[RMDB]
RNA sequence: GGGAACGACUCGAGUAGAGUCGAAAAUGGACAACAACAAUACUGAAACUCUAAAUGUUGAUAUUUUGAGUCAUGCCGUUACAAACAAAUACGAUAUUCUUAAUUGCACUACUCCCUUUUCGGGGUACGUUUUGGAAUCUUUCGAGAUUCCAAAACGAAAAGAAACAACAACAACAAC
Reactivity to DMS in 0.01 (KOAc 150mM, MgCl2 10mM, bicine 150mM(pH8.5), 24C), signal-to-noise 3, nucleotides 027 to 126: u040g030g010a040c130a100a030c170a070a140c110a060a030u040a110c140u030g000a130a090a050c030u020c110u000a020a030a040u020g020u020u030g000a110u000a040u030u000u000u000g000a040g000u000c090a060u020g020c050c020g000u000u000a140c190a080a000a130c190a020a080a090u020a050c090g000a040u020a050u000u000c050u030u000a030a040u000u020g020c150a070c200u000a020c050u010c000c010c060u000u000u020u030c150g020g010g010g000u010a030
Reactivity to 2A3 in 0.01 (KOAc 150mM, MgCl2 10mM, bicine 150mM(pH8.5), 24C), signal-to-noise 4, nucleotides 027 to 126: u130g050g030a010c000a130a020c000a030a000c020a050a080u120a130c090u130g070a080a090a040c020u010c040u070a070a060a060u200g050u160u110g090a030u050a060u300u030u010u040g020a010g000u070c050a070u190g040c020c000g040u060u040a050c050a010a130a000c020a000a060a070u160a040c040g090a100u010a070u210u050c030u040u120a140a170u110u110g020c070a010c050u060a030c050u140c010c000c000u070u080u050u120c040g040g000g030g000u040a030
This 177-nucleotide RNA was probed chemically with DMS and 2A3.
Source: RMDB libraries RFM100 and RFMREP, as collected in RNAgym.
The reactions ran in a buffer of 150 mM KOAc, 10 mM MgCl2 and 150 mM bicine (pH 8.5), at 24 C.